[RMDB]
RNA sequence: GGGAACGACUCGAGUAGAGUCGAAAAUAAUUGGACUCAACGCCGGACAUCUCACCAGCAUCGACAGCAGGAGUGACGAUCAGGUUGAUGACCUUAUCAGACCUGCUGAGAGGAGGUGCAUGGCCGCCAACAUUUAAAUCUUCGGAUUUAAAUGUUGAAAAGAAACAACAACAACAAC
Reactivity to 2A3 in 0.01 (KOAc 150mM, MgCl2 10mM, bicine 150mM(pH8.5), 24C), signal-to-noise 8, nucleotides 027 to 126: u150a000a090u090u110g070g040a060c030u020c070a060a050c090g050c080c030g010g010a010c000a030u050c080u010c060a030c020c010a020g110c020a150u030c020g220a260c040a010g000c000a010g020g010a110g130u100g080a030c050g000a010u020c040a010g030g070u030u040g160a120u280g080a030c000c000u000u010a000u000c010a010g070a090c000c010u000g000c000u010g000a010g010a010g030g040a040g010g000u000g000c010a020u020g020g000c000c000g010c020
Reactivity to DMS in 0.01 (KOAc 150mM, MgCl2 10mM, bicine 150mM(pH8.5), 24C), signal-to-noise 9, nucleotides 027 to 126: u020a090a130u010u010g010g010a160c050u000c050a110a110c120g010c100c010g020g010a080c040a030u000c070u010c010a060c050c020a090g010c130a120u000c030g010a150c110a010g010c000a020g010g010a220g010u010g020a160c130g000a010u010c300a020g000g000u000u000g000a130u000g000a070c000c010u000u000a020u000c010a070g000a090c010c000u000g000c000u000g010a290g010a060g000g010a100g010g010u000g010c300a040u000g000g010c010c020g010c130